[RMDB]
RNA sequence: GGGAACGACUCGAGUAGAGUCGAAAAGAGUAACCAACAAUGUGAUCUUGCUUACGGAGGCAAGACUUGCACAGUAUAAAAUCUGCAAGUAGUGCUAUUGUUGGAAAGAAUACUGUGAAGGCAACAACGCAUUUAGUAGGUUCGCCUACUAAAUGCGAAAAGAAACAACAACAACAAC
Reactivity to 2A3 in 0.01 (KOAc 150mM, MgCl2 10mM, bicine 150mM(pH8.5), 24C), signal-to-noise 5, nucleotides 027 to 126: g130a000g020u040a050a010c000c000a000a000c000a000a000u080g040u050g160a080u040c000u000u020g020c010u090u090a120c230g300g300a020g010g030c000a000a000g020a010c000u000u000g000c000a010c030a040g070u040a040u070a220a110a010a030u070c010u010g010c000a000a000g010u080a020g040u130g150c030u060a010u020u000g000u000u010g010g000a010a050a000g070a060a050u130a060c050u070g000u060g130a080a030g090g020c040a050a030c010a030a020
Reactivity to DMS in 0.01 (KOAc 150mM, MgCl2 10mM, bicine 150mM(pH8.5), 24C), signal-to-noise 3, nucleotides 027 to 126: g000a060g010u000a090a180c000c020a010a040c000a000a000u000g000u010g010a120u000c000u000u010g000c000u000u010a130c210g020g000a100g000g020c020a000a010g000a020c000u000u000g020c000a040c240a040g040u030a300u030a090a040a080a110u020c240u000g000c010a010a020g000u000a100g020u060g020c050u050a010u000u000g010u000u000g000g000a080a070a090g020a100a100u000a070c020u010g030u010g010a090a080g020g000c110a030a100c220a130a160